[RMDB]
RNA sequence: GGGAACGACUCGAGUAGAGUCGAAAAGGGCCAACUUCUCUCAUGGCGCAAAUUCAACUUACGGGCUUACCAGAGAGAUAGCAUGGGAAACAUACUAUGACUGUGAACUUACCGUUAGUUACAAGAAGGCAAUAGAAUACUUCGGUAUUCUAUUGCCAAAAGAAACAACAACAACAAC
Reactivity to DMS in 0.01 (KOAc 150mM, MgCl2 10mM, bicine 150mM(pH8.5), 24C), signal-to-noise 3, nucleotides 027 to 126: g040g010g000c000c000a050a110c220u000u010c100u020c000u010c060a130u050g000g020c020g000c230a020a080a190u040u000c100a030a080c110u000u000a040c050g000g020g000c120u040u000a030c110c050a020g000a090g010a100g010a010u020a000g000c070a030u000g000g010g040a110a020a130c100a020u000a030c010u000a010u000g040a220c030u000g000u020g000a070a070c140u010u000a100c040c040g010u010u020a030g020u000u020a080c160a030a060g010a100a070
Reactivity to 2A3 in 0.01 (KOAc 150mM, MgCl2 10mM, bicine 150mM(pH8.5), 24C), signal-to-noise 4, nucleotides 027 to 126: g100g000g010c020c000a020a010c150u100u020c000u000c000u000c040a080u040g030g000c030g020c080a000a070a080u170u060c030a020a020c010u010u020a010c060g020g000g010c050u040u040a050c020c030a020g050a000g000a000g010a050u040a000g000c000a010u000g030g000g050a050a210a020c010a020u210a060c010u030a030u070g110a120c010u040g020u030g110a070a020c030u070u090a010c030c000g020u030u050a010g000u000u040a110c060a180a050g020a070a010